[RMDB]
RNA sequence: GGGAACGACUCGAGUAGAGUCGAAAAGAUAUGGAUCGUGUUUGAGGCCGUUUGACGAGCUCGGAAACGAGCUCCGAGGAACUACCUUGAUACGAUCCUAAGUCAAAGGCUGCCUUCGGGCAGCCAACAUCCCUAUGCUCUUCGGAGCAUAGGGAUGAAAAGAAACAACAACAACAAC
Reactivity to DMS in 0.01 (KOAc 150mM, MgCl2 10mM, bicine 150mM(pH8.5), 24C), signal-to-noise 2, nucleotides 027 to 126: g000a030u000a300u000g010g000a010u010c020g010u010g010u000u000u010g060a010g030g030c070c120g000u020u000u000g000a300c300g010a020g000c010u000c030g000g000a030a100a210c010g030a030g000c000u010c000c010g000a280g020g000a010a020c000u000a080c020c000u000u000g000a010u000a020c020g000a010u000c000c020u000a000a070g010u000c030a120a110a130g000g040c000u000g010c010c000u000u000c180g010g040g040c000a000g010c000c010a030a020
Reactivity to 2A3 in 0.01 (KOAc 150mM, MgCl2 10mM, bicine 150mM(pH8.5), 24C), signal-to-noise 1, nucleotides 027 to 126: g040a020u080a010u180g020g000a000u000c000g000u020g060u060u140u300g060a010g000g000c030c070g020u020u030u100g050a030c000g000a000g000c020u000c000g050g040a100a060a020c000g000a000g010c000u010c000c040g040a090g100g200a020a000c000u020a010c020c000u010u010g000a000u020a010c000g000a000u000c000c000u000a050a000g020u000c020a080a040a170g000g010c000u000g000c000c030u050u120c240g150g010g000c000a000g010c000c000a000a000
About this RNA
Chemical mapping of a 177-nucleotide RNA with DMS and 2A3. The DMS profile rests on 1,524 reads. For DMS the reverse transcriptase was MarathonRT. Values are in units of 0.01, from 0 to 300, in steps of 10. The 2A3 profile rests on 3,180 reads. The RNA was probed in 150 mM KOAc, 10 mM MgCl2 and 150 mM bicine (pH 8.5) at 24 C. 2A3 is a SHAPE reagent: it acylates the 2'-hydroxyl of flexible nucleotides of all four kinds.